[RMDB]
RNA sequence: GGGAACGACUCGAGUAGAGUCGAAAAGAUAUGGAAAGAAGAAAGGCGUCAUUCUUCGAUAAGAUCCAAUCGGAAACGAUUGAAGAUCUUUUGACGAAGAUUGACGCCUUUCUUCUUUCCUAAGUCAUCCCUUACACUUGUUCGCAAGUGUAAGGGAAAAAGAAACAACAACAACAAC
Reactivity to DMS in 0.01 (KOAc 150mM, MgCl2 10mM, bicine 150mM(pH8.5), 24C), signal-to-noise 2, nucleotides 027 to 126: g020a030u010a300u030g000g010a010a000a030g000a000a020g000a010a000a010g000g000c010g010u000c000a010u000u000c000u000u000c000g000a140u020a020a010g000a010u000c020c000a020a010u010c000g020g000a180a140a210c000g020a000u000u000g000a160a160g000a010u000c000u000u000u020u000g030a190c170g000a020a010g010a000u000u000g010a000c010g000c010c010u010u010u000c000u000u010c000u000u000u000c000c000u000a000a110g010u000c060a250

The record gives the reactivity of an RNA of 177 nucleotides to DMS.
The DMS profile rests on 1,866 reads.
The data come from the RNA Mapping Database (RMDB), library TTRINS.
Reactivities are given for positions 27 through 126.
The reactions ran in a buffer of 150 mM KOAc, 10 mM MgCl2 and 150 mM bicine (pH 8.5), at 24 C.